[RMDB]
An RNA of 207 nucleotides, treated with DMS and 2A3 and read out base by base.
The RNA was probed in 150 mM KOAc, 10 mM MgCl2 and 150 mM bicine (pH 8.5) at 24 C.
For 2A3 the reverse transcriptase was SuperScript II with manganese.
For DMS, 2,807 sequencing reads were counted.
DMS (dimethyl sulfate) methylates the pairing face of unpaired adenines and cytosines.
RNA sequence: GGGAACGACUCGAGUAGAGUCGAAAAGUUAUGAGUUCGCUCAUAACGUAUCGGGGUUGGUGGUCUAGUCAGGCUAUGACACCUCCUUCACAUGGAGGAGGUCGGCGGUUCAAAUCCGCCCCAACCCACCAGAAGGAAGCCUCGUUCGCGAGGCUAAUAUGUGAGUGAAUUUCGAUUCACUCACAUAAAAAGAAACAACAACAACAAC
Reactivity to DMS in 0.01 (KOAc 150mM, MgCl2 10mM, bicine 150mM(pH8.5), 24C), signal-to-noise 2, nucleotides 027 to 156: g010u010u000a000u000g020a020g000u000u000c300g010c000u000c030a010u000a000a000c000g020u010a040u010c030g020g000g040g050u000u000g010g010u000g000g010u000c090u000a110g010u010c190a060g010g030c070u000a020u010g000a080c040a100c000c000u010c000c000u000u010c020a200c240a150u000g010g000a010g010g010a080g040g010u000c050g000g030c040g040g060u010u000c090a060a300a140u000c030c000g010c000c000c000c030a020a070c000c000c010a020c030c010a050g000a120a120g000g000a150a040g000c000c000u000c000g000u000u000c250g020c040g020a010g020g000c020u000a010a030
Reactivity to 2A3 in 0.01 (KOAc 150mM, MgCl2 10mM, bicine 150mM(pH8.5), 24C), signal-to-noise 2, nucleotides 027 to 156: g000u000u000a000u020g000a000g020u070u080c140g040c100u000c000a000u010a000a000c010g010u030a090u140c080g010g000g000g000u020u000g000g010u060g020g030u000c010u000a050g100u110c090a040g020g110c020u130a090u290g010a020c010a000c030c000u000c000c000u040u050c090a220c060a300u300g020g000a000g000g000a020g000g000u020c010g010g000c000g000g000u050u010c010a010a020a040u000c000c000g000c000c000c000c000a000a000c020c000c000a020c000c000a020g120a120a030g100g030a070a010g000c000c000u000c000g000u020u050c140g000c040g100a020g010g000c000u000a000a000